[RMDB]
RNA sequence: GGGAACGACUCGAGUAGAGUCGAAAACUCUAACUUCUUGAUUUUCUUCUUCGCCUUCCGGAGUUCCCUCUCGAGAUCCUCUAACUUCUUUCUUCCGCUCACCCACUGCUCGAGAACCUCUUCUCUCCCUCCGCGGCCCUUCUUCGACUCGGACCGGCAACGUUACCAAGUUCGCUUGGUAACGUUGAAAAGAAACAACAACAACAAC
Reactivity to 2A3 in 0.01 (KOAc 150mM, MgCl2 10mM, bicine 150mM(pH8.5), 24C), signal-to-noise 1, nucleotides 027 to 156: c070u060c020u050a140a070c020u110u050c040u120u130g040a130u190u110u140u020c020u070u010c010u100u030c040g050c050c050u090u110c060c010g050g020a040g000u000u020c000c020c020u000c020u000c030g160a140g020a120u040c010c030u000c010u050a120a120c050u070u000c000u120u210u000c000u060u040c070c060g080c000u020c030a030c000c040c000a020c040u010g000c040u020c020g050a030g000a100a060c010c030u090c000u080u040c000u000c000u000c040c020c010u020c000c000g000c000g020g110c030c000c000u030u010c010u020u060c010g010a020c010u020c030g050g070a060c000c000g000g030

Conditions: 150 mM KOAc, 10 mM MgCl2 and 150 mM bicine (pH 8.5), 24 C. The record gives the reactivity of an RNA of 207 nucleotides to 2A3.